[RMDB]
RNA sequence: GGGAACGACUCGAGUAGAGUCGAAAAUUGAAAGAAAAAGGGCUUUGGGCGGAAGAGACCAAGUCCGCUCGACUAGCGGAGGCAUCCUGGUGGCAAGAGCCGCGUUACGCCAGGCCUCAAGGACGCGCUCGUAUAUAUUCUUCGGAAUAUAUACGAGAAAAGAAACAACAACAACAAC
Reactivity to DMS in 0.01 (KOAc 150mM, MgCl2 10mM, bicine 150mM(pH8.5), 24C), signal-to-noise 4, nucleotides 027 to 126: u010u010g010a090a070a130g000a040a060a070a140a100g000g000g000c090u000u010u000g020g010g000c040g010g010a060a050g010a130g010a250c040c050a090a090g000u000c000c010g010c030u000c040g010a100c220u010a080g010c030g000g000a040g010g010c300a090u010c130c020u000g010g020u000g010g010c050a090a070g000a090g010c060c030g000c070g000u000u000a060c100g000c000c010a040g000g000c030c000u000c030a070a040g010g010a200c040g010c060g010
Reactivity to 2A3 in 0.01 (KOAc 150mM, MgCl2 10mM, bicine 150mM(pH8.5), 24C), signal-to-noise 2, nucleotides 027 to 126: u060u060g020a000a060a080g120a020a100a030a020a020g080g000g000c040u090u100u100g040g010g010c020g010g030a040a010g060a010g010a020c040c010a020a000g050u000c000c000g000c010u020c010g040a050c080u130a020g020c040g050g020a010g020g000c000a060u070c010c000u010g020g010u020g020g040c060a120a070g040a030g180c040c060g030c020g030u100u070a050c020g000c010c000a000g040g000c010c000u010c020a030a020g070g010a020c010g000c010g000